[RMDB]
RNA sequence: GGGAACGACUCGAGUAGAGUCGAAAAGAAAUACUCCCAAGAAGUUCCCGGAGGGAUCCAAGAGACGGAUGACUUUCCCCUAUUGGUUGGGAAAAGUCCCGGAACCAGGAAAUGGGAAAGAGACGGUAUAUCGCUUAGUUCGCUAAGCGAAAAAGAAACAACAACAACAAC
Reactivity to DMS in 0.01 (KOAc 150mM, MgCl2 10mM, bicine 150mM(pH8.5), 24C), signal-to-noise 9, nucleotides 027 to 129: g000a070a110a110u040a110c170u030c030c030c000a120a080g020a030a160g030u020u010c050c020c010g000g010a090g040g010g020a070u040c030c060a100a080g030a040g020a130c040g000g000a090u030g010a040c010u000u030u020c000c000c000c110u030a140u030u020g010g030u030u040g000g040g000a020a020a030a060g020u020c020c060c000g020g000a110a090c080c060a040g020g020a020a050a020u020g030g030g000a030a030a020g010a040g020a060c040g020g040u050a060u010a090
Reactivity to 2A3 in 0.01 (KOAc 150mM, MgCl2 10mM, bicine 150mM(pH8.5), 24C), signal-to-noise 6, nucleotides 027 to 129: g030a010a130a020u130a060c040u020c020c020c020a010a040g070a030a000g040u020u040c000c000c000g000g010a050g020g010g020a030u000c040c030a060a010g050a000g020a080c020g000g000a050u110g000a020c000u010u000u010c000c010c000c000u050a150u150u270g110g000u080u070g030g000g000a020a080a000a010g030u000c000c000c000g000g000a010a030c030c010a000g010g050a020a050a050u100g020g000g000a010a070a000g040a010g010a010c030g000g020u090a090u020a020
Structure probing data (DMS and 2A3) for a 170-nucleotide construct.
Reactivities are rounded to 0.1 and cut off at 0 and 3.
DMS (dimethyl sulfate) methylates the pairing face of unpaired adenines and cytosines.
Values cover nucleotides 27 to 129.